[RMDB]
RNA sequence: GGGAACGACUCGAGUAGAGUCGAAAAACACAUAGGUGCUCAGAGCAGGUUCAAUGAUUUAACCCUACAUGAGGAAGUAAACUUAAUCUACAUAAAAUAUGGAUUUGGGGGUGUGUGAUCUCUGUGGUCAGUCUGGAGGAGUGUGCGUGAGGUGUGAACUCCGUAAUAGCUUCGGCUAUUACGGAGUAAAAGAAACAACAACAACAAC
Reactivity to 2A3 in 0.01 (KOAc 150mM, MgCl2 10mM, bicine 150mM(pH8.5), 24C), signal-to-noise 2, nucleotides 027 to 156: a020c070a000c000a040u170a090g030g000u030g020c000u000c040a000g030a000g020c030a000g010g050u090u080c060a060a100u100g020a030u030u080u140a050a060c000c010c030u060a080c040a080u140g040a010g080g010a010a020g040u060a010a070a060c010u050u090a090a030u020c020u100a120c010a050u210a090a080a070a060u220a130u160g070g030a050u010u110u110g020g000g000g000g000u010g010u010g000u020g030a030u020c080u000c040u140g000u020g030g020u020c020a000g010u000c020u040g040g010a040g000g030a050g000u100g040u050g030c030g030u050g060a030g010g000u010g010u050g040a020
Reactivity to DMS in 0.01 (KOAc 150mM, MgCl2 10mM, bicine 150mM(pH8.5), 24C), signal-to-noise 1, nucleotides 027 to 156: a110c060a030c020a180u000a120g060g000u000g040c040u000c030a100g010a130g010c050a070g000g000u000u000c090a050a120u000g000a100u000u000u000a040a060c080c000c010u020a050c030a080u000g010a070g000g030a060a060g000u010a040a100a110c050u010u000a040a070u000c040u000a060c030a090u010a030a010a060a300u010a080u000g010g010a100u000u000u000g030g020g020g060g010u010g000u000g050u010g020a070u000c040u020c080u010g070u010g060g050u030c060a030g060u000c080u010g020g000a100g020g010a090g000u000g020u010g010c070g010u000g000a070g000g010u010g060u000g000a070